[RMDB]
RNA sequence: GGGAACGACUCGAGUAGAGUCGAAAAGGGAGGAAUGCCGCAAGAAACCAAAGAAAAUCAUGGGUUUCAUUAAACUUCAUUAUUGAAGAGGUUUAAUAAAGCUGGUUCUAUAGGUGCGCGCCUGCUCACAACACAGGCUGUUCGCAGCCUGUGUUGUAAAAGAAACAACAACAACAAC
Reactivity to DMS in 0.01 (KOAc 150mM, MgCl2 10mM, bicine 150mM(pH8.5), 24C), signal-to-noise 1, nucleotides 027 to 126: g000g000g000a050g010g010a030a070u070g010c050c020g000c110a060a140g000a010a020a030c040c000a130a190a160g000a100a150a090a070u040c120a050u020g010g010g000u000u000u000c080a000u010u000a000a000a000c000u000u010c000a100u000u020a300u000u020g020a210a060g000a000g020g000u060u000u000a000a000u010a030a080a030g000c040u000g040g000u000u000c020u000a140u010a180g000g000u000g000c140g000c030g040c020c030u010g010c050u000c120
Reactivity to 2A3 in 0.01 (KOAc 150mM, MgCl2 10mM, bicine 150mM(pH8.5), 24C), signal-to-noise 3, nucleotides 027 to 126: g110g000g000a030g020g050a100a040u140g040c020c000g030c010a010a040g020a090a010a010c010c010a090a040a000g100a020a160a040a020u100c030a070u130g090g010g080u000u000u000c000a000u000u000a010a000a000c000u050u000c020a160u080u300a170u110u300g060a130a080g000a000g050g000u000u000u000a000a030u030a020a050a000g000c040u090g030g010u090u000c000u000a060u090a100g020g020u020g020c090g010c020g040c000c000u090g060c020u000c010
Overview: Structure probing data (DMS and 2A3) for a 177-nucleotide construct. Conditions: 150 mM KOAc, 10 mM MgCl2 and 150 mM bicine (pH 8.5), 24 C. The 2A3 profile rests on 969 reads. The DMS profile rests on 1,480 reads.